[RMDB]
RNA sequence: GGGAACGACUCGAGUAGAGUCGAAAAUGUGGAGUUCAAGCAUGACGAUCGGCUCAAUGAAGAGAGCGGAGCUCUCCUGCAGUGUGCCCUGCUUUACACCAGCUGUGCAGGGCAGCGUCGGCUCCGCUAGUAUUCCUCGGUUCGCCGAGGAAUACUAAAAAGAAACAACAACAACAAC
Reactivity to DMS in 0.01 (KOAc 150mM, MgCl2 10mM, bicine 150mM(pH8.5), 24C), signal-to-noise 3, nucleotides 027 to 126: u010g040u000g010g010a080g020u010u000c100a130a110g020c090a070u000g000a080c140g010a140u000c050g010g030c020u000c030a140a070u000g000a140a050g020a070g010a070g010c000g020g010a020g000c020u000c080u000c030c040u000g020c090a090g010u000g040u000g000c000c010c000u000g000c010u010u010u010a060c080a110c080c170a120g000c120u010g020u000g010c000a010g010g000g020c010a010g010c050g000u000c120g000g000c000u000c010c010g000c000
Reactivity to 2A3 in 0.01 (KOAc 150mM, MgCl2 10mM, bicine 150mM(pH8.5), 24C), signal-to-noise 2, nucleotides 027 to 126: u220g010u060g020g040a140g030u120u210c070a070a040g030c020a060u080g060a070c090g040a070u050c010g050g040c000u000c040a020a100u130g080a130a030g070a020g000a010g020c030g040g020a000g000c000u010c040u040c070c040u040g000c020a100g030u090g080u090g170c000c000c000u010g000c000u110u150u120a060c070a060c040c050a080g030c200u030g010u040g030c000a000g000g000g000c000a000g000c010g040u060c010g000g000c000u010c000c000g020c000